[RMDB]
The record gives the reactivity of an RNA of 177 nucleotides to 2A3. The RNA was probed in 150 mM KOAc, 10 mM MgCl2 and 150 mM bicine (pH 8.5) at 24 C.

RNA sequence: GGGAACGACUCGAGUAGAGUCGAAAACUUGAGCUCUUUUCCUAUACUUUGUCCUAUGGCCAGCUUUCUCCUUAUUACGAAGAGAUUGCGGGAUGUGGGUGCAGAGUGGGAAAAUCUGAGUUCGGUCGGUAGGUAUACGGUUCGCCGUAUACCUACCAAAAGAAACAACAACAACAAC
Reactivity to 2A3 in 0.01 (KOAc 150mM, MgCl2 10mM, bicine 150mM(pH8.5), 24C), signal-to-noise 1, nucleotides 027 to 126: c010u130u240g010a010g000c010u000c000u050u000u040u000c010c000u110a110u080a210c010u000u000u000g000u010c000c000u010a030u040g040g030c010c000a020g000c030u000u000u030c000u060c020c010u070u120a150u190u200a180c080g030a070a030g010a020g010a000u020u010g030c010g000g010g010a020u020g000u010g060g000g030u130g020c010a000g000a000g000u030g000g040g040a030a040a010a020u110c120u110g000a000g030u000u010c020g030g020u090c040